[RMDB]
RNA sequence: GGGAACGACUCGAGUAGAGUCGAAAACGCUGGGCAUGAACACAGGGUAGUGGAGAAACCUGAAGCGCGCACGGGUUUCUAUGAAGCUACAUUGUUCCCAUGCCUGUGCUGAAGCGCGCACGGCAACCGAAAGGUGCGGAAGACUUGUUCGCAAGUCCUUUUUUAACAUUUUCGAAUGUUAAAAAAGAAAAGAAACAACAACAACAAC
Reactivity to DMS in 0.01 (KOAc 150mM, MgCl2 10mM, bicine 150mM(pH8.5), 24C), signal-to-noise 2, nucleotides 027 to 156: c040g000c040u000g010g010g000c000a040u000g000a090a100c070a050c000a060g000g010g020u000a030g010u020g010g010a040g010a060a020a020c010c010u000g000a080a030g020c010g040c020g000c010a300c050g010g000g010u010u000u000c000u000a160u020g020a200a300g020c000u010a010c010a060u000u000g000u000u000c100c040c000a060u000g010c000c010u020g020u000g000c020u000g010a070a080g010c040g010c040g000c010a300c040g000g000c010a070a060c020c010g000a130a110a140g030g020u000g020c030g000g000a120a150g000a070c040u000u000g000u000u000c140g030c050a090a060g010u000c020
Reactivity to 2A3 in 0.01 (KOAc 150mM, MgCl2 10mM, bicine 150mM(pH8.5), 24C), signal-to-noise 4, nucleotides 027 to 156: c010g000c000u000g010g000g000c000a000u000g030a270a020c010a010c000a050g050g000g000u000a000g010u010g010g020a000g000a000a000a000c000c000u020g050a190a070g000c000g000c000g000c010a000c010g010g010g000u030u000u000c050u090a300u030g000a000a000g000c000u000a000c000a030u010u030g010u020u010c000c010c010a000u000g000c000c000u010g000u010g000c000u030g010a150a060g000c010g000c000g000c010a000c000g010g000c010a010a010c010c000g040a110a020a020g000g010u020g020c010g020g040a040a010g010a010c010u030u040g040u180u180c240g010c140a010a000g010u000c000
Chemical mapping of a 207-nucleotide RNA with DMS and 2A3. For DMS, 5,626 sequencing reads were counted. High DMS reactivity at an A or C suggests that its Watson-Crick edge is free. It was measured as part of the RMDB library RNAMAK. The 2A3 profile rests on 10,358 reads. For DMS the reverse transcriptase was MarathonRT. The reactions ran in a buffer of 150 mM KOAc, 10 mM MgCl2 and 150 mM bicine (pH 8.5), at 24 C.